[RMDB]
RNA sequence: GGGAACGACUCGAGUAGAGUCGAAAACGUGAACAUCGCUCUGCUAAGUCCCGUCGUUCUUCCAGUCAGAGCGAGAUUGUAAGCAACCUUAUGCGCAAUGAAGACAUAGAGGGACUUCUGAAUUAAGGCCAUUUAUUUAUUUCGAUAAAUAAAUGGCAAAAGAAACAACAACAACAAC
Reactivity to 2A3 in 0.01 (KOAc 150mM, MgCl2 10mM, bicine 150mM(pH8.5), 24C), signal-to-noise 9, nucleotides 027 to 126: c060g100u140g100a060a010c010a100u020c000g000c000u010c000u030g060c050u080a050a020g030u030c000c010c010g050u050c020g020u050u010c010u110u020c020c000a070g110u140c010a000g010a010g000c040g010a010g000a020u030u070g030u070a080a090g010c020a050a090c030c050u110u140a050u140g020c040g000c010a020a070u140g030a090a030g030a020c030a030u190a030g140a070g020g000g010a010c000u080u020c060u070g210a230a180u160u110a100a040g110
Reactivity to DMS in 0.01 (KOAc 150mM, MgCl2 10mM, bicine 150mM(pH8.5), 24C), signal-to-noise 7, nucleotides 027 to 126: c140g010u030g020a120a130c150a110u000c000g020c000u000c000u000g000c140u020a060a030g020u030c030c010c030g010u020c040g020u000u010c020u000u020c020c080a080g020u010c020a010g000a030g010c000g000a030g000a060u000u020g010u010a100a160g000c020a070a110c110c070u010u020a060u020g000c030g010c060a070a080u010g000a100a080g010a090c060a070u020a070g000a090g000g000g010a040c040u010u010c130u000g010a100a130u050u020a110a110g010
Structure probing data (2A3 and DMS) for a 177-nucleotide construct. Values cover nucleotides 27 to 126. Source: RMDB library OK1LIB, as collected in RNAgym. Conditions: 150 mM KOAc, 10 mM MgCl2 and 150 mM bicine (pH 8.5), 24 C. The DMS profile rests on 17,526 reads.